Source: RMDB library OK2TRN, as collected in RNAgym. The record gives the reactivity of an RNA of 177 nucleotides to 2A3 and DMS. High 2A3 reactivity points to a flexible backbone, as in loops and unpaired stretches. For DMS, 1,917 sequencing reads were counted. Conditions: 150 mM KOAc, 10 mM MgCl2 and 150 mM bicine (pH 8.5), 24 C.
[RMDB]
RNA sequence: GGGAACGACUCGAGUAGAGUCGAAAAGAUGGCGACUAUCGCCUUUUCCAGGUCGACUGCACGCAAAUGUGCCAGCGAAGUGGCCAGCCGGUGAUGAUCAGACUCAUGUCGGAGUCCGUCGAUGGUGUGCACUCUGUAGGUUCGCCUACAGAGUGCAAAAAGAAACAACAACAACAAC
Reactivity to 2A3 in 0.01 (KOAc 150mM, MgCl2 10mM, bicine 150mM(pH8.5), 24C), signal-to-noise 2, nucleotides 027 to 126: g010a030u040g010g010c030g050a090c180u250a170u300c090g010c030c060u000u000u000u000c000c000a020g050g060u000c020g030a130c040u040g030c070a020c050g110c140a050a170a180u270g020u050g010c040c020a030g000c060g070a120a060g070u070g120g000c020c010a000g010c000c010g000g060u120g030a040u050g000a020u090c020a020g000a050c010u020c030a070u230g150u200c070g100g010a000g040u000c000c020g040u010c030g010a030u020g000g070u000g070
Reactivity to DMS in 0.01 (KOAc 150mM, MgCl2 10mM, bicine 150mM(pH8.5), 24C), signal-to-noise 2, nucleotides 027 to 126: g000a010u000g000g000c000g010a260c270u010a130u000c010g020c010c000u000u000u000u000c010c040a130g000g010u040c020g000a160c020u000g000c030a020c030g010c100a110a100a150u000g010u010g020c040c040a000g010c030g020a050a100g020u030g000g000c030c040a150g000c060c050g010g020u050g000a040u000g000a100u000c160a200g000a040c030u000c050a100u020g010u000c150g000g010a040g000u000c030c110g010u000c060g010a110u000g010g000u010g020